RNA sequence: GGGAACGACUCGAGUAGAGUCGAAAAGAUAUGGAGAUUUACAGGGAGCUCUCAUAUCGGAAACGAUAUACGCGAGAGCGACGAUCUGUAUGUCUCCUAAGUCAAAAUCUGGACUUCGGUCCAGAAACUUUGUUUACAUCUUCGGAUGUAAACAAAGAAAAGAAACAACAACAACAAC
Reactivity to 2A3 in 0.01 (KOAc 150mM, MgCl2 10mM, bicine 150mM(pH8.5), 24C), signal-to-noise 1, nucleotides 027 to 126: g040a020u050a030u150g010g000a000g000a000u000u050u070a050c020a010g000g080g050a070g020c000u000c010u000c000a020u000a000u000c000g000g020a040a020a010c010g010a000u000a000u030a100c300g060c130g200a010g000a030g070c000g030a020c030g010a010u000c000u000g020u010a020u040g060u000c010u000c000c000u020a040a010g030u000c020a000a000a050a300u000c010u000g020g000a000c000u060u000c300g130g010u000c000c010a000g000a000a000a010
Reactivity to DMS in 0.01 (KOAc 150mM, MgCl2 10mM, bicine 150mM(pH8.5), 24C), signal-to-noise 2, nucleotides 027 to 126: g000a020u010a300u010g010g000a020g000a060u000u010u000a020c020a020g030g000g010a050g000c010u010c010u010c000a060u000a000u000c000g000g010a150a070a090c000g020a020u000a000u000a170c300g080c300g000a020g000a000g000c000g000a010c210g030a020u010c000u020g020u000a010u000g000u000c000u030c000c000u000a020a120g010u000c020a160a110a090a120u000c000u000g040g010a000c000u000u010c300g020g010u000c000c000a000g020a000a060a170